[RMDB]
RNA sequence: GGGAACGACUCGAGUAGAGUCGAAAAGAUAUGGAAUAGGGUGCUGCUCGCACAUCGAUCUUAUAAAGAAUCGGAAACGAUUCUUUAUAAGGGAGUGCGAGAACUACAGCUAACCUAUUCCUAAGUCGAAAUGGAAAUUCUUCGGAAUUUCCAUUUCAAAAGAAACAACAACAACAAC
Reactivity to 2A3 in 0.01 (KOAc 150mM, MgCl2 10mM, bicine 150mM(pH8.5), 24C), signal-to-noise 1, nucleotides 027 to 126: g020a040u110a050u120g020g000a010a000u010a040g040g020g000u050g000c000u000g010c010u000c010g040c010a010c040a110u300c070g120a150u110c010u000u000a010u030a010a050a000g000a000a000u010c030g040g060a030a040a000c000g000a020u000u000c000u000u000u010a010u000a000a010g000g010g030a060g020u010g000c040g000a000g010a000a000c000u210a060c000a030g000c000u060a180a300c000c000u000a010u000u000c000c000u000a050a020g050u050c120
Reactivity to DMS in 0.01 (KOAc 150mM, MgCl2 10mM, bicine 150mM(pH8.5), 24C), signal-to-noise 2, nucleotides 027 to 126: g010a060u000a170u000g000g000a010a000u000a020g010g030g000u000g000c000u000g000c000u010c000g000c000a000c020a230u020c170g010a140u000c000u000u000a000u000a000a000a010g020a040a000u000c000g010g000a050a090a120c010g010a020u000u000c000u000u020u010a010u000a000a000g010g010g020a070g030u000g010c010g010a020g010a070a030c110u000a300c010a010g000c000u000a130a140c000c000u000a010u000u000c000c000u010a020a100g000u000c030
Source information
This 177-nucleotide RNA was probed chemically with 2A3 and DMS. Reactivities are given for positions 27 through 126. Source: RMDB library TTRINS, as collected in RNAgym. The 2A3 profile rests on 2,723 reads. For 2A3 the reverse transcriptase was SuperScript II with manganese. High 2A3 reactivity points to a flexible backbone, as in loops and unpaired stretches. Conditions: 150 mM KOAc, 10 mM MgCl2 and 150 mM bicine (pH 8.5), 24 C.